[RMDB]
RNA sequence: GGGAACGACUCGAGUAGAGUCGAAAAUACGAAUUCAGCACAGAAGCAUGAUAUACGGUCGUGUGUUGCUUGAUUAGUAGCGGUAGCAAGAGGCAACCACGACGAGAUGCACGUAACAUUGAGUUCACUGGUCCCUGCUAUUCGUAGCAGGGGCCAGAAAAGAAACAACAACAACAAC
Reactivity to 2A3 in 0.01 (KOAc 150mM, MgCl2 10mM, bicine 150mM(pH8.5), 24C), signal-to-noise 1, nucleotides 027 to 126: u130a010c040g000a000a010u010u010c000a000g020c050a030c000a010g030a010a010g000c010a030u010g000a020u050a010u030a120c020g100g000u000c000g010u050g010u020g000u000u000g020c000u010u010g060a080u050u080a010g140u070a020g080c010g070g050u190a040g000c000a010a000g020a030g000g000c000a000a000c000c000a000c000g030a000c000g000a000g000a000u030g030c000a000c020g020u100a040a020c020a100u020u000g000a000g010u010u000c000a000
Reactivity to DMS in 0.01 (KOAc 150mM, MgCl2 10mM, bicine 150mM(pH8.5), 24C), signal-to-noise 1, nucleotides 027 to 126: u020a020c000g000a020a010u020u010c000a000g000c020a020c000a000g010a000a020g000c010a000u000g010a180u010a180u070a100c140g020g000u000c000g030u000g010u030g000u000u020g000c000u000u000g000a240u070u030a070g040u000a130g000c020g010g000u050a050g000c030a020a150g000a070g000g000c000a000a010c020c000a000c000g000a050c010g000a020g000a000u000g020c040a080c020g000u000a050a070c280a130u040u000g000a000g030u000u000c050a170

Structure probing data (2A3 and DMS) for a 177-nucleotide construct.
The data come from the RNA Mapping Database (RMDB), library OK1LIB.
Reactivities are given for positions 27 through 126.
For DMS, 2,171 sequencing reads were counted.